This 207-nucleotide RNA was probed chemically with 2A3 and DMS.
RNA sequence: GGGAACGACUCGAGUAGAGUCGAAAAGGUAAUGGACUACGGCGGCGUGUGGCGAACAGGGAUACCGGUAGUCAGUGUCUGGAACAUCCCAAGGGGCGGCGGAGCUAGCACCCCGACACGUUAAGGCAAAACUUCGCACGGUUCGCCGUGCGAAGAACUUAAAAAUUGAGUUCGCUCAAUUUUUAAGAAAAGAAACAACAACAACAAC
Reactivity to 2A3 in 0.01 (KOAc 150mM, MgCl2 10mM, bicine 150mM(pH8.5), 24C), signal-to-noise 2, nucleotides 027 to 156: g040g000u090a050a050u150g060g030a000c010u050a020c070g030g030c020g050g000c040g020u070g010u030g040g030c020g040a030a020c020a050g020g020g030a030u060a070c020c030g050g030u020a020g080u050c070a020g040u000g060u060c010u020g000g030a020a080c030a060u020c020c000c050a050a080g020g000g000g000c090g050g000c020g070g020a070g060c040u070a030g010c030a070c000c000c010c020g010a020c020a010c040g040u070u110a070a050g030g010c030a040a010a100a150c010u010u000c000g000c010a000c000g000g060u050u030c090g000c040c000g000u000g000c000g020a000a000g000a000a000
Reactivity to DMS in 0.01 (KOAc 150mM, MgCl2 10mM, bicine 150mM(pH8.5), 24C), signal-to-noise 2, nucleotides 027 to 156: g020g000u000a070a090u010g010g010a050c040u000a070c050g030g000c060g000g040c030g000u010g030u010g030g040c030g020a070a090c040a110g010g010g010a110u000a070c020c050g030g000u000a070g020u010c020a130g030u010g020u000c010u030g010g030a100a100c060a150u000c020c000c030a110a150g000g000g020g020c060g000g010c020g020g010a120g020c040u000a130g010c020a070c000c000c000c000g010a020c060a030c070g010u000u000a060a140g000g010c020a080a030a100a100c000u000u010c000g060c020a000c000g000g010u010u000c300g020c070c000g030u010g000c020g010a000a010g000a040a110

Background: The 2A3 profile rests on 1,784 reads. 2A3 is a SHAPE reagent: it acylates the 2'-hydroxyl of flexible nucleotides of all four kinds.